This 177-nucleotide RNA was probed chemically with DMS and 2A3. The reactions ran in a buffer of 150 mM KOAc, 10 mM MgCl2 and 150 mM bicine (pH 8.5), at 24 C. It was measured as part of the RMDB library M2PK50.
RNA sequence: GGGAACGACUCGAGUAGAGUCGAAAAUUCAGCGCAUUCGUGCGCUGAAAAGCUGUACAACGCAUGUACAGAAAACAAAACAAUAACAAAACAAAAAGCGUAGCAGGGUUCUUUUCGAAGAACCCAAGACGUUAAGAAAGUUCGCUUUCUUAACGUCAAAAGAAACAACAACAACAAC
Reactivity to DMS in 0.01 (KOAc 150mM, MgCl2 10mM, bicine 150mM(pH8.5), 24C), signal-to-noise 2, nucleotides 027 to 126: u000u020c000a010g030c000g020c000a030u000u000c170g050u010g010c000g000c000u000g000a000a010a070a150g020c010u000g000u000a010c030a050a070c070g010c050a150u010g000u000a000c010a000g000a060a070a070a100c090a050a100a060a100c080a050a080u010a080a110c110a070a040a150a100c090a070a120a060a090a130g000c040g010u000a110g040c220a140g010g010g000u000u000c000u000u000u000u000c180g010a020a000g000a030a000c000c000c000a030a010
Reactivity to 2A3 in 0.01 (KOAc 150mM, MgCl2 10mM, bicine 150mM(pH8.5), 24C), signal-to-noise 2, nucleotides 027 to 126: u010u000c010a000g000c000g000c020a020u030u060c160g090u050g000c000g000c000u020g000a000a000a000a000g020c000u010g010u010a010c010a030a020c070g030c130a160u050g000u010a000c000a000g030a060a100a000a020c070a020a090a020a010c020a030a020u210a090a030c040a030a130a030a010c040a020a200a080a060a000g050c050g070u140a030g100c140a140g000g000g000u000u010c000u020u050u020u070c120g040a000a010g000a000a010c000c010c000a000a000